Record summary
The record gives the reactivity of an RNA of 207 nucleotides to 2A3. The RNA was probed in 150 mM KOAc, 10 mM MgCl2 and 150 mM bicine (pH 8.5) at 24 C.
[RMDB]
RNA sequence: GGGAACGACUCGAGUAGAGUCGAAAACAUUCAAGGCCCUGUUUGGGAAUAACGCCAAGAUCACCGAGAGUCUGUUAAAAAGGUUUAUUCCCGAAGUGUGGCACCCCCCGGACGACGUGGCCGCGCGGCUCCGGACCGCAGGGUUCGGGGCGGUGGGGCACCAUUCAUUCUUCGGAAUGAAUGGUGCAAAAGAAACAACAACAACAAC
Reactivity to 2A3 in 0.01 (KOAc 150mM, MgCl2 10mM, bicine 150mM(pH8.5), 24C), signal-to-noise 1, nucleotides 027 to 156: c020a040u300u300c090a050a080g120g040c030c030c010u130g300u000u050u000g000g000g010a030a000u030a040a010c160g000c080c000a040a020g040a040u070c050a020c190c140g050a060g010a020g230u020c030u140g160u250u300a170a250a100a050a080g020g000u000u060u000a000u000u050c010c000c040g000a020a020g130u090g010u160g090g000c020a130c010c020c000c000c000c000g000g020a050c030g020a030c000g070u040g030g000c030c000g160c050g020c000g300g000c000u000c030c000g000g000a010c000c000g030c120a080g180g000g000u000u020c000g000g000g040g000c050g000g000u030g000g000g030